Structure probing data (2A3 and DMS) for a 177-nucleotide construct. The data come from the RNA Mapping Database (RMDB), library OK2TRN. The reactions ran in a buffer of 150 mM KOAc, 10 mM MgCl2 and 150 mM bicine (pH 8.5), at 24 C. For 2A3, 21,858 sequencing reads were counted. For DMS the reverse transcriptase was MarathonRT.
RNA sequence: GGGAACGACUCGAGUAGAGUCGAAAAGGGACGAGCUGGAUCCAACCCGUGAGAACGGGUUGGAUCUAGCUCAAUGGCGUGUUGUUAGAAUUUCGGAGAGUUCUGAGUUCCGAAGAGUACGCCAUGACUACUGCGUAGUAUUCGUACUAUGUAGUAGAAAAGAAACAACAACAACAAC
Reactivity to 2A3 in 0.01 (KOAc 150mM, MgCl2 10mM, bicine 150mM(pH8.5), 24C), signal-to-noise 5, nucleotides 027 to 126: g040g010g020a020c050g010a000g000c010u000g000g000a000u010c000c000a000a010c000c000c000g010u020g050a140g010a030a010c010g000g010g000u010u000g000g000a000u000c000u000a000g000c000u000c000a000a000u000g000g000c000g000u010g010u020u050g110u050u040a060g020a150a110u140u150u070c010g020g010a030g020a060g160u200u050c050u150g070a060g060u050u000c030c000g000a010a010g020a010g030u010a000c000g000c000c000a010u020g020a000
Reactivity to DMS in 0.01 (KOAc 150mM, MgCl2 10mM, bicine 150mM(pH8.5), 24C), signal-to-noise 9, nucleotides 027 to 126: g000g010g020a140c160g010a010g010c000u000g000g000a010u000c000c000a000a000c000c000c000g020u000g000a240g000a220a010c000g010g000g010u000u000g000g000a000u000c000u000a000g010c000u000c000a020a020u000g000g010c010g020u000g010u000u000g010u000u000a130g000a060a060u000u010u000c010g020g000a020g010a190g010u010u000c080u000g010a080g000u000u000c000c030g000a030a040g000a070g010u000a010c010g010c000c000a010u000g000a260